[RMDB]
Structure probing data (DMS and 2A3) for a 177-nucleotide construct. The RNA was probed in 150 mM KOAc, 10 mM MgCl2 and 150 mM bicine (pH 8.5) at 24 C.
RNA sequence: GGGAACGACUCGAGUAGAGUCGAAAAGAUAUGGAUACGCACGCGAUAAGCUGCUAUCGGAAACGAUAGGUAGCUUUUGACGCGUGAAAUCCUAAGUCAAACAGGACUGUGUUCGCACAGUCCUGAACUGUUUAACACUGUUCGCAGUGUUAAACAGAAAAGAAACAACAACAACAAC
Reactivity to DMS in 0.01 (KOAc 150mM, MgCl2 10mM, bicine 150mM(pH8.5), 24C), signal-to-noise 5, nucleotides 027 to 126: g020a030u000a270u010g000g000a010u000a070c300g000c000a000c000g010c000g010a130u000a020a010g010c000u010g000c000u010a000u000c000g000g000a050a050a130c010g010a010u000a010g010g010u010a010g020c000u000u000u010u010g010a160c080g000c000g020u000g000a020a030a010u000c000c000u000a040a200g000u000c020a110a120a290c010a010g020g000a010c000u010g030u000g010u000u000c250g030c000a010c000a010g010u000c000c000u000g010a010a090
Reactivity to 2A3 in 0.01 (KOAc 150mM, MgCl2 10mM, bicine 150mM(pH8.5), 24C), signal-to-noise 4, nucleotides 027 to 126: g010a010u070a020u120g010g000a020u030a030c230g000c040a000c010g010c010g060a110u030a260a000g000c000u000g000c000u000a000u000c000g000g010a050a040a020c020g000a000u000a030g200g280u080a000g000c010u050u020u040u160g110a040c010g000c000g000u000g000a010a000a000u020c000c000u020a070a020g050u030c050a080a050a120c010a020g000g010a010c000u010g000u000g030u070u070c190g060c120a010c000a000g000u000c010c000u000g000a010a000